[RMDB]
RNA sequence: GGGAACGACUCGAGUAGAGUCGAAAAGAUGCAUUCUGUGCUCCAAAGGCAAUAGUUAUGCAUGGAUUGGGAUAACAUUCACUGAGGACAUGCUUAUAGGCCCAGUGGGCAGCCAGCCAGCAAUUGCAGCUUGAAUGACAUAUUUUUGCUUGGCAAAGCAUUACUCGUCAUUCGUGACGAGUAAUGCAAAAGAAACAACAACAACAAC
Reactivity to 2A3 in 0.01 (KOAc 150mM, MgCl2 10mM, bicine 150mM(pH8.5), 24C), signal-to-noise 4, nucleotides 027 to 156: g110a010u020g020c010a000u060u000c030u040g070u070g030c000u020c090c060a120a040a010g090g000c050a100a050u040a120g130u170u080a080u100g010c040a060u010g020g030a040u020u050g010g000g050a050u080a210a080c030a070u090u080c020a030c050u040g050a130g040g060a020c040a050u050g030c060u180u160a130u090a240g120g040c000c000c000a030g000u100g000g010g010c020a010g030c030c000a000g010c000c000a000g000c030a060a050u140u060g020c020a030g060c020u090u100g030a090a070u120g050a060c030a040u150a160u040u070u020u010u030g030c030u070u060g060g000c020a090a040a000
Reactivity to DMS in 0.01 (KOAc 150mM, MgCl2 10mM, bicine 150mM(pH8.5), 24C), signal-to-noise 1, nucleotides 027 to 156: g030a050u000g000c010a030u020u000c030u010g000u000g000c000u000c100c150a130a070a300g030g040c000a020a160u000a030g020u000u010a020u000g040c000a100u000g000g000a170u000u000g020g000g000a160u000a060a110c060a300u020u000c060a020c010u000g010a090g080g000a160c050a070u000g030c000u000u000a060u000a170g010g000c010c010c060a120g000u000g030g010g020c140a090g000c020c060a210g020c020c010a060g090c000a030a040u000u010g000c060a140g040c020u000u000g010a040a100u020g010a040c150a060u000a110u000u000u000u000u000g030c000u020u000g020g000c040a030a060a210